[RMDB]
RNA sequence: GGGAACGACUCGAGUAGAGUCGAAAAAAGCUGGUAACACUUCCCUGUCUGCAGCCAGAGGUGGAUGGUGAGGCUCAUGUGGGUGUCCCCUCUCUCACUCUGCCUUCAGUGGAGCUAGACCUGCCAGGAGCACUUGGCCUGCAGGGGCAGGUCCCAGUAGGACUGAGUUAUUCGUAACUCAGUCCUAAAAAGAAACAACAACAACAAC
Reactivity to 2A3 in 0.01 (KOAc 150mM, MgCl2 10mM, bicine 150mM(pH8.5), 24C), signal-to-noise 1, nucleotides 027 to 156: a000a000g100c090u060g000g030u110a180a060c000a010c120u020u020c000c010c000u010g020u010c030u000g020c010a010g000c000c010a020g000a000g040g000u090g050g080a070u160g030g100u020g050a030g050g050c060u110c270a200u300g010u230g090g030g030u160g060u110c020c080c000c040u020c010u010c000u000c010a090c010u000c010u020g060c000c030u000u020c010a030g010u020g060g020a020g020c060u070a050g070a020c020c000u000g050c030c000a050g000g040a020g010c020a040c080u090u150g010g050c120c020u020g010c000a040g030g010g000g000c000a000g020g000u020c020c000c010a000g000